[RMDB]
RNA sequence: GGGAACGACUCGAGUAGAGUCGAAAAUAAAUGAAGCAAAUCUCCAAACGCCAACGAUGAGCGUUUCGCAAUCGCCGCUUAAGGCUUUUGCCGAGGCUGCUUGAGCCUUGUUACCAAAGAAAAGCCGAAAACCCAAAUGUCUUCGGACAUUUGGGAAGCCUUAAUGAGAAUUCGUUCUCAUUAAGGCAAAAGAAACAACAACAACAAC
Reactivity to DMS in 0.01 (KOAc 150mM, MgCl2 10mM, bicine 150mM(pH8.5), 24C), signal-to-noise 1, nucleotides 027 to 156: u010a060a070a180u010g010a170a070g000c010a040a040a070u000c010u000c030c020a060a200a000c030g050c030c030a130a130c050g020a110u000g010a140g050c030g010u000u000u020c070g000c040a070a020u000c090g000c030c010g020c210u000u010a110a160g010g010c020u010u000u000u000g010c020c050g000a120g020g030c000u000g000c010u000u000g020a080g000c000c010u030u000g030u020u020a250c040c080a080a080a180g000a130a140a060a050g050c050c070g010a050a090a080a210c000c000c020a000a010a020u020g010u000c000u000u030c300g040g000a020c000a020u000u000u000g020g030g010a010a050
Reactivity to 2A3 in 0.01 (KOAc 150mM, MgCl2 10mM, bicine 150mM(pH8.5), 24C), signal-to-noise 3, nucleotides 027 to 156: u100a000a050a040u110g060a050a010g050c060a060a070a140u050c070u030c030c040a040a010a000c010g000c020c020a110a090c160g200a210u130g030a050g030c020g010u010u040u090c040g000c010a010a030u010c020g010c020c000g080c110u220u190a150a120g000g000c000u020u030u010u010g000c000c010g010a000g020g000c040u090g010c010u050u040g020a000g000c000c000u000u020g050u070u130a050c010c010a040a030a030g030a020a050a020a000g010c020c020g060a040a060a050a050c000c000c000a000a000a000u000g000u000c000u000u010c060g090g000a000c000a000u000u000u000g000g000g000a010a000
The data come from the RNA Mapping Database (RMDB), library M2RFPK. An RNA of 207 nucleotides, treated with DMS and 2A3 and read out base by base. The DMS profile rests on 1,930 reads. DMS adducts were read by reverse transcription with MarathonRT. The reactions ran in a buffer of 150 mM KOAc, 10 mM MgCl2 and 150 mM bicine (pH 8.5), at 24 C.